[RMDB]
RNA sequence: GGGAACGACUCGAGUAGAGUCGAAAAACACGCGUACCACAUACGCGUAGAGGCCUCAGUCGCGUACCAGGUACCGAUCGAUGCGCGCGCAUCAUGCGUACGUACUGCGGAUCAGGCCGGCGCAUGGACCGUACGUGGGGUUCGCCCCACGUACGGUAAAAGAAACAACAACAACAAC
Reactivity to DMS in 0.01 (KOAc 150mM, MgCl2 10mM, bicine 150mM(pH8.5), 24C), signal-to-noise 2, nucleotides 027 to 126: a080c110a020c020g090c000g000u000a010c120c110a210c180a300u000a020c000g020c000g030u000a050g020a110g020g010c020c020u000c190a060g020u010c020g020c000g000u010a000c040c300a090g020g010u000a010c000c030g000a160u000c100g020a080u000g000c000g010c230g000c130g000c040a000u000c040a060u000g000c140g000u000a050c000g030u000a040c030u010g040c070g000g010a000u010c200a080g010g010c010c020g000g000c080g000c090a080u000g020g000
Reactivity to 2A3 in 0.01 (KOAc 150mM, MgCl2 10mM, bicine 150mM(pH8.5), 24C), signal-to-noise 2, nucleotides 027 to 126: a000c070a040c010g010c000g000u010a040c000c080a080c180a180u050a020c020g000c010g000u010a050g050a040g080g000c000c000u040c050a020g060u050c020g030c000g030u090a030c070c050a060g120g050u060a040c030c040g040a060u040c060g060a030u000g040c040g030c020g020c050g040c130a010u050c030a020u180g070c020g030u010a110c010g010u000a010c030u180g130c030g050g030a110u060c020a010g010g030c020c000g040g020c040g020c020a030u080g110g010